[RMDB]
RNA sequence: GGGAACGACUCGAGUAGAGUCGAAAAGACAAGUGCAACAAAGGAUUUGUUCGCAGCUCAGAUUUGUCCAUCCACGUGCGGAUUCACACGGGUGAAAAGCCAUACAGCUGCGAUCUGUGUGGUAAGGAUAUACCAGUGAGUUCGCUCACUGGUAUAUAAAAGAAACAACAACAACAAC
Reactivity to DMS in 0.01 (KOAc 150mM, MgCl2 10mM, bicine 150mM(pH8.5), 24C), signal-to-noise 9, nucleotides 027 to 126: g000a050c070a050a050g030u000g020c070a060a050c070a040a060a160g010g010a130u020u000u000g000u000u010c090g020c010a040g000c070u010c130a070g010a130u020u000u010g010u000c010c030a090u010c020c010a140c090g010u010g020c110g020g010a140u040u030c030a060c020a110c060g020g000g020u000g000a060a050a090a110g000c000c010a040u010a020c060a020g000c070u020g000c180g000a030u040c000u000g000u000g010u000g000g000u020a080a090g010g010
Reactivity to 2A3 in 0.01 (KOAc 150mM, MgCl2 10mM, bicine 150mM(pH8.5), 24C), signal-to-noise 8, nucleotides 027 to 126: g070a010c060a060a040g050u040g060c030a060a030c030a030a110a110g240g040a220u060u030u090g040u030u050c100g000c020a070g030c040u080c070a050g030a190u050u060u120g040u000c010c020a050u030c020c000a080c060g000u050g050c040g050g090a080u140u120c010a020c000a000c030g040g010g020u090g060a100a080a040a010g020c010c000a010u030a020c020a010g040c020u260g180c070g030a060u040c000u000g020u010g000u000g000g030u040a070a030g090g020